Chemical mapping of a 177-nucleotide RNA with DMS. The reactions ran in a buffer of 150 mM KOAc, 10 mM MgCl2 and 150 mM bicine (pH 8.5), at 24 C. Reactivities are given for positions 27 through 126.

RNA sequence: GGGAACGACUCGAGUAGAGUCGAAAACCAACCGCCUUCGGGCGGUUGGGAUGACAGUCGCGAGCAAAGUCCGGGCUGACUGUCCACGACAGAACCCGGCUUAAAUCUAUCGCUUCGGCGAUAGAAACAAUUGGGAGGCAUUCGUGCCUCCCAAUUGAAAAGAAACAACAACAACAAC
Reactivity to DMS in 0.01 (KOAc 150mM, MgCl2 10mM, bicine 150mM(pH8.5), 24C), signal-to-noise 2, nucleotides 027 to 126: c000c000a000a000c000c000g040c000c010u000u010c300g030g030g000c010g030g000u000u000g010g020g000a070u010g010a100c050a010g000u000c010g030c110g010a280g020c080a100a040a030g010u010c000c020g010g010g010c060u010g030a040c030u000g000u000c000c130a070c280g010a090c050a040g000a160a150c010c000c000g000g000c030u010u000a010a090a160u010c000u000a030u000c010g000c000u000u010c220g030g000c000g000a010u010a010g010a030a100a160